[RMDB]
The record gives the reactivity of an RNA of 177 nucleotides to 2A3 and DMS. DMS adducts were read by reverse transcription with MarathonRT. High DMS reactivity at an A or C suggests that its Watson-Crick edge is free.

RNA sequence: GGGAACGACUCGAGUAGAGUCGAAAAUGCAGAUCCAAGAUUAUUUGGGCCAAGAUUGUUUGCCACUGUGGGGAAUGAAGGAAGGCAGCCAAUCAUCUAAAUAACCAAACAUGUACUCUCACAAGGCGUUAGAACCAUAUUUCGAUAUGGUUCUAACAAAAGAAACAACAACAACAAC
Reactivity to 2A3 in 0.01 (KOAc 150mM, MgCl2 10mM, bicine 150mM(pH8.5), 24C), signal-to-noise 3, nucleotides 027 to 126: u100g000c010a010g030a070u060c030c030a000a050g050a100u100u100a030u040u120u050g010g000g000c040c040a020a050g020a040u040u030g010u050u050u040g020c030c020a050c060u080g020u130g070g010g030g060a070a140u200g020a070a020g090g040a020a090g000g030c000a000g010c000c000a000a020u020c000a000u000c010u060a060a070a060u060a010a040c050c010a090a040a060c020a010u060g010u040a080c050u030c010u000c070a080c000a070a070g090g000c100
Reactivity to DMS in 0.01 (KOAc 150mM, MgCl2 10mM, bicine 150mM(pH8.5), 24C), signal-to-noise 5, nucleotides 027 to 126: u010g000c110a080g010a100u010c050c060a090a070g000a100u010u000a060u010u000u000g010g010g010c300c130a070a080g000a060u000u000g020u000u000u000g010c010c010a190c120u000g020u020g020g010g000g020a110a070u000g010a110a100g010g000a100a090g000g010c020a030g010c050c020a020a040u000c030a040u010c030u000a020a030a040u010a040a080c040c030a040a070a110c170a050u000g000u010a060c090u000c030u000c040a060c130a100a090g010g020c260